[RMDB]
RNA sequence: GGGAACGACUCGAGUAGAGUCGAAAAUUAACAAAAAGCUAAUUUUUUUUGUGGGCCCACUUUCGAUAGUUAGUCACUAGCGGAAGCUCAGGAAGAGCAGCUUUGGUCUCUCAGCACUUUAAUCCUGACACUAGCAUAAGUUCGCUUAUGCUAGUGUAAAAGAAACAACAACAACAAC
Reactivity to DMS in 0.01 (KOAc 150mM, MgCl2 10mM, bicine 150mM(pH8.5), 24C), signal-to-noise 4, nucleotides 027 to 126: u010u010a060a030c010a050a070a060a080a050g010c110u000a030a010u020u000u020u020u000u010u000u000g000u000g010g000g000c020c020c030a080c030u000u000u010c020g000a030u000a020g000u000u010a100g010u020c200a080c010u000a020g000c000g010g000a020a020g010c170u010c030a060g000g020a090a040g010a070g000c060a090g010c020u000u010u000g010g010u010c060u000c020u000c050a080g000c060a130c020u030u000u010a070a090u000c010c010u010g010
Reactivity to 2A3 in 0.01 (KOAc 150mM, MgCl2 10mM, bicine 150mM(pH8.5), 24C), signal-to-noise 6, nucleotides 027 to 126: u030u020a030a010c010a010a040a050a020a030g060c060u150a080a140u160u060u010u000u000u010u070u110g060u070g020g080g010c010c000c000a010c000u010u020u040c010g020a030u010a030g030u080u020a040g050u120c050a010c030u000a010g010c000g010g010a020a020g000c020u010c040a020g060g030a050a050g010a010g020c060a010g020c040u070u050u090g070g050u060c030u000c000u000c070a000g020c000a000c030u040u030u070a080a050u040c000c010u000g030